[RMDB]
This 177-nucleotide RNA was probed chemically with DMS and 2A3. It was measured as part of the RMDB library M2PK50. Reactivities are given for positions 27 through 126. For DMS the reverse transcriptase was MarathonRT. The DMS profile rests on 1,191 reads.
RNA sequence: GGGAACGACUCGAGUAGAGUCGAAAAACAAUCUGGUUCGCCAGAUUGUCAAUGUCUUCCUAAAAUCCUUGGAAGACUGUAUAUAUACAAUAAAGGUCGAAAGUACCUGUGCUUUCGAGCACAGGAAGCUAAGACAGUACUUCGGUACUGUCUUAGCAAAAGAAACAACAACAACAAC
Reactivity to DMS in 0.01 (KOAc 150mM, MgCl2 10mM, bicine 150mM(pH8.5), 24C), signal-to-noise 1, nucleotides 027 to 126: a020c000a000a000u000c000u010g010g000u010u000c180g000c000c000a000g040a010u000u030g000u000c100a060a050u020g000u000c000u000u000c000c000u000a010a020a010a180u020c000c020u000u010g000g010a020a000g010a000c000u010g020u000a080u000a050u000a120u010a090c080a060a110u000a050a130a040g020g010u010c230g000a080a040a090g030u000a070c000c000u000g000u000g000c000u000u000u040c210g010a000g010c010a000c010a020g000g010a030a040
Reactivity to 2A3 in 0.01 (KOAc 150mM, MgCl2 10mM, bicine 150mM(pH8.5), 24C), signal-to-noise 3, nucleotides 027 to 126: a000c010a010a000u000c000u010g010g050u030u010c120g070c090c010a000g000a010u000u000g000u000c000a020a040u090g010u000c000u000u020c000c000u000a000a010a000a080u020c000c000u010u010g000g000a000a000g000a000c000u000g010u000a070u000a030u000a010u010a150c030a120a060u190a300a190a010g000g010u010c030g050a060a100a000g050u050a070c000c010u000g000u000g020c000u080u060u170c300g080a010g000c000a000c010a010g010g000a000a000